An RNA of 177 nucleotides, treated with 2A3 and DMS and read out base by base. The 2A3 profile rests on 1,111 reads. 2A3 adducts were read by reverse transcription with SuperScript II with manganese. In probing experiments dimethyl sulfate is read out at A N1 and C N3, which are open when not base-paired. For DMS the reverse transcriptase was MarathonRT.
RNA sequence: GGGAACGACUCGAGUAGAGUCGAAAAUUGCAAGGAGACGUAGAAAAUAAAGUAGGAGCAAAUGGAUUUUCUGCUUGGCGGUAUAGCACGUUUGAGUUUUUCAGUCGUGUCUAUGUUCAGGUUUAUGCCUGUAGAAAGACUUCGGUCUUUCUACAGGAAAAGAAACAACAACAACAAC
Reactivity to 2A3 in 0.01 (KOAc 150mM, MgCl2 10mM, bicine 150mM(pH8.5), 24C), signal-to-noise 1, nucleotides 027 to 126: u030u050g020c050a040a000g030g010a050g020a040c020g000u030a010g060a070a110a000a010u140a070a080a030g050u030a040g010g060a020g020c050a020a030a140u100g080g000a060u090u030u030u000c020u000g020c000u000u010g000g030c000g020g020u140a000u030a040g000c000a000c020g000u000u050u050g030a040g010u210u240u050u160u010c010a000g000u030c030g000u000g020u080c020u020a010u040g020u040u070c030a020g030g050u050u050u000a060u210g040
Reactivity to DMS in 0.01 (KOAc 150mM, MgCl2 10mM, bicine 150mM(pH8.5), 24C), signal-to-noise 1, nucleotides 027 to 126: u000u010g000c020a050a080g000g030a050g010a080c110g010u000a060g000a070a050a080a080u010a050a030a050g010u000a050g000g020a050g010c090a060a070a090u000g010g010a080u000u000u000u000c020u010g030c050u010u010g020g010c040g010g020u010a020u010a010g000c010a010c010g000u010u000u000g010a010g000u010u020u000u010u000c020a000g000u000c010g040u000g000u010c020u000a020u010g000u000u010c050a070g010g010u000u000u010a100u050g010